[RMDB]
RNA sequence: GGGAACGACUCGAGUAGAGUCGAAAAGUAAGCCGAGCUCUUCCUCGGUCUUGUUCUGAAUGCACACAUGUCUAGGGGCUAAGGAUGUCCUACAGGUACCCGCACGUAACCUUCAGAGAGUGUGGAUCGUACAUGACAGCUUCGGCUGUCAUGUACGAAAAGAAACAACAACAACAAC
Reactivity to DMS in 0.01 (KOAc 150mM, MgCl2 10mM, bicine 150mM(pH8.5), 24C), signal-to-noise 1, nucleotides 027 to 126: g000u030a080a030g000c070c000g000a000g000c300u010c140u050u000c210c000u000c030g000g060u010c000u000u000g030u010u000c030u000g000a080a000u020g040c050a000c140a180c080a000u000g000u000c000u000a010g000g040g000g000c060u000a170a250g000g000a090u000g000u000c020c000u000a080c000a110g000g000u000a020c010c020c020g050c300a080c060g000u000a050a010c000c050u000u000c120a010g000a300g000a120g000u000g000u000g000g090a050u000
Reactivity to 2A3 in 0.01 (KOAc 150mM, MgCl2 10mM, bicine 150mM(pH8.5), 24C), signal-to-noise 2, nucleotides 027 to 126: g080u130a000a060g030c000c000g000a000g000c000u020c010u220u060c020c030u020c030g010g000u010c010u060u020g000u010u040c010u020g150a100a030u190g030c040a020c000a000c020a050u050g020u100c000u020a060g000g000g000g000c050u050a030a000g140g030a100u040g040u030c000c040u150a060c050a020g000g090u150a110c000c000c000g030c010a000c020g100u030a040a060c030c000u020u030c010a000g010a000g000a040g050u030g000u050g040g000a030u030
Conditions: 150 mM KOAc, 10 mM MgCl2 and 150 mM bicine (pH 8.5), 24 C. Structure probing data (DMS and 2A3) for a 177-nucleotide construct. For DMS the reverse transcriptase was MarathonRT. The 2A3 profile rests on 1,257 reads.